[RMDB]
RNA sequence: GGGAACGACUCGAGUAGAGUCGAAAACACUUGUUUAACGAUGGACCAGGGUCCUUCUUCCCGAUUUUGUUCCGUGAUAUAGGUGAGCACACUAUUUUCCGUAUAUGAAAUGGGAUGUCGCAUAUCUCUAGGUGCCAUACGAACGGGUGCUCGUGCACCAUCCACAGUUUUUCGAAACUGUGGAUGGAAAAGAAACAACAACAACAAC
Reactivity to DMS in 0.01 (KOAc 150mM, MgCl2 10mM, bicine 150mM(pH8.5), 24C), signal-to-noise 5, nucleotides 027 to 156: c030a140c110u000u000g020u000u010u000a060a100c070g020a070u000g020g020a060c040c040a160g020g040g010u010c040c020u000u000c040u000u000c000c010c000g010a160u000u000u000u000g020u000u000c050c030g020u000g020a080u000a080u000a060g010g030u010g000a110g010c030a080c040a110c030u000a080u010u010u000u010c030c040g030u000a100u000a080u010g010a030a040a090u000g010g010g010a070u000g010u000c160g030c120a130u000a090u000c020u010c040u000a110g010g030u000g000c070c090a090u010a130c090g010a040a050c130g020g020g030u000g000c010u000c030g020u010g010c060a190
Reactivity to 2A3 in 0.01 (KOAc 150mM, MgCl2 10mM, bicine 150mM(pH8.5), 24C), signal-to-noise 8, nucleotides 027 to 156: c050a020c040u080u110g060u110u160u110a130a050c060g010a030u040g010g010a010c020c080a090g120g040g030u040c010c000u020u000c000u040u020c000c000c010g100a120u000u060u030u100g050u070u040c090c050g080u130g090a040u030a020u040a110g100g030u060g120a080g070c080a050c020a030c090u020a060u090u120u080u000c020c020g040u060a070u010a020u220g070a030a040a040u050g000g000g020a010u050g050u090c030g010c140a070u050a100u150c020u000c010u050a100g060g020u050g140c030c010a030u030a060c030g020a040a000c010g030g020g000u010g000c010u050c060g040u060g030c010a030